[RMDB]
RNA sequence: GGGAACGACUCGAGUAGAGUCGAAAAGUUCAUCCCCUGAUCAAGGAUGCCCGAAACGGUGCGGCGGAAAGCAAAUUAAAUAACGUCAACCCAUCGGGACGGUUGGCCAGUUAAGAAGUGAGGAUUCAAAAGAUCGAACCGUUCGCGGUUCGAUCAACAUGUCUCUUAAGUUCGCUUAAGAGACAUGAAAAGAAACAACAACAACAAC
Reactivity to 2A3 in 0.01 (KOAc 150mM, MgCl2 10mM, bicine 150mM(pH8.5), 24C), signal-to-noise 8, nucleotides 027 to 156: g030u080u070c010a040u030c030c010c000c020u040g040a070u040c030a030a040g070g020a050u070g040c000c010c000g030a080a090a030c070g030g010u060g020c090g040g000c020g010g050a140a050a020g080c160a090a050a110u170u200a070a080a100u160a080a010c010g000u000c000a010a010c010c000c000a030u030c010g000g010g010a010c000g030g030u030u010g020g000c030c030a040g020u070u130a080a060g030a090a030g050u090g100a090g030g060a060u080u070c080a030a050a030a070g000a000u000c000g000a000a000c010c000g010u030u050c250g010c010g080g010u000u000c000g010a000u000c000a000a000
Reactivity to DMS in 0.01 (KOAc 150mM, MgCl2 10mM, bicine 150mM(pH8.5), 24C), signal-to-noise 3, nucleotides 027 to 156: g000u000u010c010a090u010c010c000c000c010u020g010a120u000c080a110a130g020g010a140u010g000c010c010c000g020a060a170a110c150g010g010u010g030c080g060g000c010g030g000a070a120a150g010c050a040a080a260u000u010a090a070a100u010a110a100c050g030u000c010a050a040c000c010c040a280u000c040g010g000g040a060c090g000g020u000u000g020g000c060c060a150g010u000u010a050a150g010a070a110g020u000g000a080g030g030a160u000u000c060a060a040a090a170g000a010u000c000g010a000a010c000c020g040u010u010c260g020c000g040g030u000u000c000g020a000u000c000a020a070